An RNA of 177 nucleotides, treated with DMS and 2A3 and read out base by base. DMS (dimethyl sulfate) methylates the pairing face of unpaired adenines and cytosines. The data come from the RNA Mapping Database (RMDB), library OK1LIB. The reactions ran in a buffer of 150 mM KOAc, 10 mM MgCl2 and 150 mM bicine (pH 8.5), at 24 C. For DMS the reverse transcriptase was MarathonRT.
RNA sequence: GGGAACGACUCGAGUAGAGUCGAAAACAUGGCCAAGCGGCGUAGGCGGCAGACUCGUCGCCUCCCUCGAACGUGUGACGGCCUCGUAGAAACGCUUGAACUCCUUCAGCUGUGCCUUGCUGGGGGAGAUGAUUACCACGUUCGCGUGGUAAUCAUCAAAAGAAACAACAACAACAAC
Reactivity to DMS in 0.01 (KOAc 150mM, MgCl2 10mM, bicine 150mM(pH8.5), 24C), signal-to-noise 3, nucleotides 027 to 126: c020a080u030g000g030c180c020a120a190g030c030g010g000c110g010u010a020g020g010c040g000g000c030a170g030a100c190u040c120g000u030c020g010c040c030u000c030c040c010u020c040g010a120a060c030g000u020g010u000g000a120c080g000g000c030c060u000c070g000u010a040g020a100a060a050c060g000c040u010u010g000a130a210c030u000c000c000u000u020c000a000g000c010u000g000u010g000c140c060u040u010g010c000u000g000g000g000g000g010a000
Reactivity to 2A3 in 0.01 (KOAc 150mM, MgCl2 10mM, bicine 150mM(pH8.5), 24C), signal-to-noise 5, nucleotides 027 to 126: c050a120u100g030g020c060c020a060a020g060c060g040g000c040g060u080a010g000g020c020g020g010c020a040g130a290c080u120c220g010u000c000g030c000c010u020c010c000c000u040c020g050a110a060c020g020u080g050u080g110a020c030g020g000c010c010u030c030g000u020a040g110a090a100a000c050g020c050u020u130g050a070a060c010u010c010c000u000u020c000a010g000c020u080g020u160g220c050c080u090u100g000c010u020g000g010g000g000g000a000